[RMDB]
RNA sequence: GGGAACGACUCGAGUAGAGUCGAAAAUGGAGUCAUCCGACCGUAUGGAGAAAAUUUCCGACAAGAGGUGAUCCACUGAGGGUUUGCGGAAAAAUCACCUCCAGAGGACCCCUUCAGCGAACGGAAGCAAUGGUAAGUUCUUCGGAACUUACCAUUGAAAAGAAACAACAACAACAAC
Reactivity to DMS in 0.01 (KOAc 150mM, MgCl2 10mM, bicine 150mM(pH8.5), 24C), signal-to-noise 3, nucleotides 027 to 126: u010g010g020a100g010u000c090a100u000c010c040g020a180c050c060g000u010a070u010g010g010a090g000a080a060a130a130u000u000u000c010c010g030a240c240a060a130g000a060g020g010u000g000a030u000c040c070a170c080u020g000a110g000g010g010u000u010u020g010c080g050g010a010a020a070a090a080u000c050a020c030c010u000c000c000a030g000a220g010g000a060c180c050c030c010u020u000c050a050g000c130g020a060a090c020g010g000a090a080g020

Chemical mapping of a 177-nucleotide RNA with DMS. For DMS, 1,492 sequencing reads were counted. It was measured as part of the RMDB library 15KREP. For DMS the reverse transcriptase was MarathonRT. The RNA was probed in 150 mM KOAc, 10 mM MgCl2 and 150 mM bicine (pH 8.5) at 24 C.